[RMDB]
RNA sequence: GGGAACGACUCGAGUAGAGUCGAAAAAUUGAAGUACUACCAAAAGUUCAACAAAUAUGCUGGCAACAAGGACGUCAAGUUCAACAACGUUUACUUCAACACCGUUAGAGCCAAGGGCUACGAAGCGAUGAUCGAUGAUAACGAUGCCGGAAUUUGGGUAUUACUGGAGGUUCGCCUCCAGUAAUACAAAAGAAACAACAACAACAAC
Reactivity to DMS in 0.01 (KOAc 150mM, MgCl2 10mM, bicine 150mM(pH8.5), 24C), signal-to-noise 2, nucleotides 027 to 156: a150u020u000g010a040a070g050u000a090c090u010a190c000c030a060a030a130a190g020u000u020c040a110a100c040a070a080a070u000a110u010g030c070u000g030g000c000a070a120c080a090a120g020g000a060c010g030u000c070a060a130g040u000u000c070a100a060c030a080a080c000g010u000u000u010a050c040u000u000c020a000a070c040a050c030c010g010u010u010a300g000a100g000c010c000a090a170g050g050g040c040u000a180c070g000a140a210g000c020g010a090u010g010a220u000c070g000a020u000g000a140u010a020a010c040g010a080u000g000c000c050g080g030a010a140u010u000u030g020g010
Reactivity to 2A3 in 0.01 (KOAc 150mM, MgCl2 10mM, bicine 150mM(pH8.5), 24C), signal-to-noise 5, nucleotides 027 to 156: a000u080u080g010a070a010g050u060a040c040u050a050c050c040a030a070a070a050g070u120u140c030a040a040c020a030a100a020u180a080u240g080c020u020g000g010c010a050a070c010a130a140g030g010a010c020g060u260c130a100a080g010u040u030c020a040a050c050a050a030c080g000u010u060u080a040c040u010u030c030a060a060c020a010c040c020g180u230u030a010g010a010g000c020c030a110a140g080g080g020c040u200a210c070g030a040a000g020c000g020a000u040g030a040u110c070g000a010u020g030a070u020a080a000c030g020a030u050g010c010c020g010g020a010a020u040u040u070g090g010
Description
Chemical mapping of a 207-nucleotide RNA with DMS and 2A3. The 2A3 profile rests on 2,668 reads. For DMS, 3,234 sequencing reads were counted. The RNA was probed in 150 mM KOAc, 10 mM MgCl2 and 150 mM bicine (pH 8.5) at 24 C. Values cover nucleotides 27 to 156.